RNA sequence: GGGAACGACUCGAGUAGAGUCGAAAAAGAAGAUGUUAUGCUUGUUCAAACUGCCCCUUAUACCAUGUCGGUGAUCGAACUAGGUUCCCUUAAAAGAUGCCAGGGUUAGUUGAAUCCAAGGGACCAAGUCCGCAUAUCAUUUCGAUGAUAUGCGGACAAAAGAAACAACAACAACAAC
Reactivity to DMS in 0.01 (KOAc 150mM, MgCl2 10mM, bicine 150mM(pH8.5), 24C), signal-to-noise 1, nucleotides 027 to 126: a090g030a070a090g000a070u010g040u010u010a090u010g010c060u010u010g010u000u010c060a050a050a070c070u010g010c050c020c000c010u000u010a130u020a130c060c080a030u010g010u000c100g010g020u010g000a080u010c040g010a050a100c090u020a180g020g020u000u000c010c000c010u000u010a060a030a140a190g000a060u000g010c030c130a070g020g010g020u000u000a060g010u000u000g000a110a030u000c070c090a000a050g010g000g000a100c040c080a030a150